[RMDB]
RNA sequence: GGGAACGACUCGAGUAGAGUCGAAAAUGCGCUACUGGUACGCGCGGCGCGAUCAGGCCCAGUACGCGCAUGCGCUGGCGCGUACGUACGGCCGCGUACCGUGCGCGGCCGUACAUGUCAGUGAUCGUCCGAAAGGAACAUUCGUGUUCCUUUCGGAAAAAGAAACAACAACAACAAC
Reactivity to 2A3 in 0.01 (KOAc 150mM, MgCl2 10mM, bicine 150mM(pH8.5), 24C), signal-to-noise 1, nucleotides 027 to 126: u040g000c000g000c040u120a020c020u030g040g000u060a040c000g070c010g000c070g090g020c100g010c020g030a140u180c170a100g140g000c030c010c000a020g020u040a060c110g050c010g000c030a000u070g060c030g000c000u090g170g040c020g000c030g060u010a010c020g000u000a000c010g000g010c020c030g000c000g020u020a100c070c080g080u160g080c000g010c000g000g000c040c010g000u040a000c010a010u020g020u030c030a010g010u000g060a120u060c130g050
Reactivity to DMS in 0.01 (KOAc 150mM, MgCl2 10mM, bicine 150mM(pH8.5), 24C), signal-to-noise 3, nucleotides 027 to 126: u010g000c020g010c040u000a050c030u000g000g000u000a060c050g000c020g020c060g000g000c060g010c020g010a140u000c170a150g010g030c090c010c020a140g010u010a080c170g020c000g010c020a030u010g020c040g020c020u010g010g020c000g000c090g030u000a010c080g000u000a020c040g020g020c010c010g020c010g010u010a080c170c210g010u020g000c000g010c000g000g010c000c000g000u000a010c000a040u000g010u030c020a060g010u000g000a080u000c120g000